[RMDB]
Source information:
The record gives the reactivity of an RNA of 207 nucleotides to DMS and 2A3. 2A3 adducts were read by reverse transcription with SuperScript II with manganese. For 2A3, 1,281 sequencing reads were counted. High 2A3 reactivity points to a flexible backbone, as in loops and unpaired stretches.
RNA sequence: GGGAACGACUCGAGUAGAGUCGAAAAGAACAAUGGUUGUGAAAUCACCGUCCAUCCACCUGACUCUGUAUCCUGAAGGCCAUGCAGAAGAAGGCCAUUCUCCAAUACACACACUGUUUAAGGAAGUAGAAAUGGGCUUCUUAGCCCAAGAAAGAAAAGUGCUCGUAUUAUUCGUAAUACGAGCACUAAAAGAAACAACAACAACAAC
Reactivity to DMS in 0.01 (KOAc 150mM, MgCl2 10mM, bicine 150mM(pH8.5), 24C), signal-to-noise 1, nucleotides 027 to 156: g000a050a170c020a010a050u000g000g020u030u010g040u000g020a160a060a190u000c020a090c020c040g030u000c020c020a160u000c040c090a050c050c010u000g010a180c090u000c000u020g010u000a110u000c030c000u050g030a080a150g000g020c110c020a160u010g050c080a160g040a100a080g000a100a030g000g000c000c030a160u000u000c030u050c000c030a170a150u000a080c090a030c040a130c000a050c040u000g000u010u000u000a100a080g030g000a030a120g010u020a030g010a040a070a050u000g020g000g000c030u020u000c150u000u010a060g020c000c010c010a010a030g020a020a120a110g000a060a070a150
Reactivity to 2A3 in 0.01 (KOAc 150mM, MgCl2 10mM, bicine 150mM(pH8.5), 24C), signal-to-noise 3, nucleotides 027 to 156: g020a070a010c080a140a080u110g040g020u040u020g030u060g120a090a080a090u080c030a010c080c000g040u020c010c000a050u010c000c010a020c010c030u030g010a050c020u000c020u040g050u030a060u150c020c020u050g030a070a040g020g000c020c030a060u130g000c040a030g010a170a000g030a030a020g040g000c020c000a000u050u010c000u030c000c010a100a000u150a050c020a000c030a000c010a050c120u090g090u110u110u070a110a040g090g030a030a040g020u140a060g110a040a130a150u120g000g040g000c000u060u010c000u090u140a000g010c000c030c010a020a000g020a030a020a000g100a010a080a030